[RMDB]
RNA sequence: GGGAACGACUCGAGUAGAGUCGAAAACCUAACGCUUCGGCGUUAGGAGGACUUAUCUACGGAUAAGUCCAGGUCACACGUACGCGUGUGACCAACUGGUUAACUUCGGUUAACCAGACAGUAUCGUGAGAUACUGAAGCCAAGUCGUACGCGACUUGGCAACAGCGGCACUACGGUGCCGCUGAACAAGAUCGUUCGCGAUCUUGAUCGGUAGAAAAGAUGGUUUAAACCACGCCUUCUACCAAGUUAGUAAAUAAAUAGGCGGUAACUCCGACUUCGGUCGGAGUAAAAGAAACAACAACAACAAC
Reactivity to DMS in 0.01 (KOAc 150mM, MgCl2 10mM, bicine 150mM(pH8.5), 24C), signal-to-noise 1, nucleotides 027 to 266: c000c000u000a000a000c000g000c010u000u050c190g020g020c000g000u000u000a030g010g010a130g000g010a020c000u000u000a000u020c010u000a130c170g000g000a010u000a020a010g000u000c000c000a050g010g020u000c000a010c010a020c000g020u020a130c260g010c000g010u000g000u000g000a010c000c020a000a100c020u000g000g000u000u000a000a000c000u000u010c190g030g010u000u000a000a000c010c000a000g000a210c020a010g000u000a000u000c010g030u000g000a160g000a010u000a010c000u000g000a300a130g000c030c000a020a000g000u010c000g040u000a080c130g010c000g020a020c010u000u010g010g000c010a040a040c000a000g030c000g000g020c000a010c000u010a050c130g010g060u010g030c000c010g000c000u000g020a060a160c020a010a020g000a020u000c010g020u000u020c150g030c000g000a000u010c000u020u000g000a040u000c200g010g000u000a000g000a020a020a010a000g030a120u000g010g000u010u010u010a070a080a110c010c000a000c030g000c040c030u000u000c000u000a010c010c020a040a080g000u000u000a230g000u030a040a090a150u020a050a140a160u020a050g000g010c000g010g000u010a150
Reactivity to 2A3 in 0.01 (KOAc 150mM, MgCl2 10mM, bicine 150mM(pH8.5), 24C), signal-to-noise 4, nucleotides 027 to 266: c000c010u000a000a000c000g000c010u040u070c270g160g000c000g000u000u000a000g010g010a130g000g000a000c010u010u000a000u020c010u020a020c290g090g000a000u000a000a000g000u010c000c000a000g000g000u010c000a010c000a000c000g010u050a030c300g030c000g110u020g000u000g000a000c000c000a000a070c000u000g000g000u010u000a010a000c000u040u050c190g110g000u010u000a000a000c000c000a010g040a010c000a000g010u010a000u010c030g020u030g080a070g000a050u000a000c000u010g090a140a000g000c000c000a000a000g000u010c010g010u040a030c260g020c010g150a000c000u000u000g000g000c000a000a000c000a000g010c010g010g000c000a000c010u050a040c240g090g000u000g000c010c000g000c010u000g000a010a000c000a020a010g010a000u000c000g020u080u060c190g020c000g110a000u010c000u000u010g050a070u130c040g000g000u010a000g020a030a020a000a010g060a200u050g020g050u090u270u300a130a110a010c000c000a010c010g000c000c000u010u010c000u000a000c010c000a010a010g000u020u150a060g090u130a130a120a200u190a150a150a070u170a060g020g010c020g020g020u020a020